[RMDB]
RNA sequence: GGGAACGACUCGAGUAGAGUCGAAAACAGAAAAGCUUACACCUUAUGUUAUGUCUUAUGACGAUAUCAUUUCAUUUUGUAAAGAGAACAAUAUCUCUGAAGUAGUGAUUGCGGGUGAUAUUAUGAGCGGGGCUUGUAGAUUCGUCUACAAGCCCCGAAAAGAAACAACAACAACAAC
Reactivity to DMS in 0.01 (KOAc 150mM, MgCl2 10mM, bicine 150mM(pH8.5), 24C), signal-to-noise 1, nucleotides 027 to 126: c090a080g000a090a100a010a020g010c140u030u030a160c020a030c070c120u000u040a070u000g000u000u000a000u000g030u000c030u030u090a020u050g030a110c010g000a050u000a020u010c010a100u010u000u000c020a020u000u040u000u010g000u030a150a110a060g010a010g000a000a140c200a120a080u070a120u000c000u000c000u000g000a060a080g010u000a080g040u030g000a100u050u000g000c160g000g000g000u000g000a150u030a010u000u060a120u050g060a080g020
Reactivity to 2A3 in 0.01 (KOAc 150mM, MgCl2 10mM, bicine 150mM(pH8.5), 24C), signal-to-noise 2, nucleotides 027 to 126: c010a000g260a130a190a000a020g000c000u040u050a010c010a040c000c000u050u020a000u150g070u060u000a040u090g120u000c000u160u180a100u260g050a000c040g100a040u010a010u050c000a020u000u000u100c040a030u040u110u220u040g120u170a070a120a000g020a060g020a080a020c150a300a010u060a090u130c000u000c000u000g000a160a030g100u060a000g000u010g100a010u000u050g010c040g020g010g000u020g030a000u060a050u060u170a180u220g090a100g070
Structure probing data (DMS and 2A3) for a 177-nucleotide construct. For 2A3, 537 sequencing reads were counted. The data come from the RNA Mapping Database (RMDB), library OK1LIB.